[RMDB]
RNA sequence: GGGAACGACUCGAGUAGAGUCGAAAAGAUAUGGACCAUCCCUAGGGUGAUGACCUCGGAAACGAGCAAGCCCGAAAGGGAGUGGUCCUAAGUCAAAGUCAGGAAUGAGUUCGCUCAUUCCUGACAAUCAUGGUAGUUUGUUCGCAAACUACCAUGAAAAAGAAACAACAACAACAAC
Reactivity to 2A3 in 0.01 (KOAc 150mM, MgCl2 10mM, bicine 150mM(pH8.5), 24C), signal-to-noise 3, nucleotides 027 to 126: g030a020u060a060u130g010g000a000c000c000a020u040c040c000c010u050a170g010g000g020u050g060a300u230g080a100c020c000u010c010g020g000a080a050a040c000g000a000g020c030a070a040g000c010c010c040g030a180a040a050g010g010g010a040g070u080g000g010u010c000c000u000a030a000g020u020c050a160a080a060g010u000c000a010g010g020a000a000u020g010a010g030u080u210c280g080c130u030c000a000u000u020c000c010u010g000a010c010a000a000
Reactivity to DMS in 0.01 (KOAc 150mM, MgCl2 10mM, bicine 150mM(pH8.5), 24C), signal-to-noise 5, nucleotides 027 to 126: g000a060u010a300u000g000g010a020c010c010a110u000c000c020c000u000a300g000g010g010u010g020a100u010g010a110c300c000u010c010g000g000a070a100a180c010g000a000g000c040a090a280g020c000c000c010g010a060a150a080g000g000g000a030g010u000g030g010u000c000c010u000a010a060g000u000c050a080a090a110g010u000c000a010g000g000a040a010u000g010a040g020u000u010c240g010c000u000c000a010u000u000c000c000u000g000a000c000a020a070
Overview:
An RNA of 177 nucleotides, treated with 2A3 and DMS and read out base by base. Values cover nucleotides 27 to 126. For DMS, 4,437 sequencing reads were counted. The reactions ran in a buffer of 150 mM KOAc, 10 mM MgCl2 and 150 mM bicine (pH 8.5), at 24 C. DMS adducts were read by reverse transcription with MarathonRT. Source: RMDB library TTRDEL, as collected in RNAgym.